[RMDB]
RNA sequence: GGGAACGACUCGAGUAGAGUCGAAAACAGACACGCCUGGAACCUCAGAUGUCGAGGCUGCGCUUGACCAGAAGGCCGAGGAGUACAUUGCGCUGCUCCUCGGCCUGAUAAAUGCACUGCCAAAACCGUUUUGGUGUAGAUUCGUCUACACCAAAACAAAAGAAACAACAACAACAAC
Reactivity to DMS in 0.01 (KOAc 150mM, MgCl2 10mM, bicine 150mM(pH8.5), 24C), signal-to-noise 3, nucleotides 027 to 126: c130a070g010a090c060a070c130g020c120c020u000g000g010a080a120c060c030u000c080a090g010a150u010g010u000c020g010a170g010g010c030u000g000c050g020c020u000u000g020a150c150c090a100g000a160a030g010g010c000c000g000a020g000g000a020g020u000a010c050a100u010u020g010c300g020c140u000g000c000u000c010c000u000c000g000g020c000c000u000g000a030u010a040a090a100u000g010c030a030c070u000g000c020c020a030a080a090a090c150c150